[RMDB]
RNA sequence: GGGAACGACUCGAGUAGAGUCGAAAAGCAGCUACACGCUAUGUGAAAAGUCGCACGUGACUUUUCAUCACUGACGAAGCGAUCAGUGAAGUUAUGAUCGCUAGCUCGUAACUGGUAGCGUGUAGAAGAUACGAUAGUUAUUCGUGACUGUUGUAUCAAAAGAAACAACAACAACAAC
Reactivity to 2A3 in 0.01 (KOAc 150mM, MgCl2 10mM, bicine 150mM(pH8.5), 24C), signal-to-noise 9, nucleotides 027 to 126: g090c050a010g040c000u000a000c000a000c000g000c000u000a000u040g050u000g000a000a000a000a000g010u010c010g030c100a140c230g190u200g020a000c000u000u000u000u000c000a000u020c000a000c020u030g020a010c020g070a130a040g140c060g110a170u010c000a000g030u030g140a080a010g040u100u080a050u050g000a010u030c020g020c210u060a050g020c010u010c010g020u020a050a030c020u040g040g000u000a000g000c000g000u000g000u000a000g000a000a000
Reactivity to DMS in 0.01 (KOAc 150mM, MgCl2 10mM, bicine 150mM(pH8.5), 24C), signal-to-noise 9, nucleotides 027 to 126: g010c120a140g000c000u000a000c000a010c000g000c000u000a010u000g010u000g000a000a010a000a010g010u000c000g020c220a150c300g010u030g010a010c000u000u000u000u000c000a040u000c040a020c020u000g000a020c030g010a210a090g020c140g010a090u000c000a000g010u000g010a040a030g020u000u010a020u000g000a010u000c020g010c170u040a050g000c110u000c010g000u000a020a020c030u000g000g020u000a000g000c000g010u000g000u000a000g000a050a070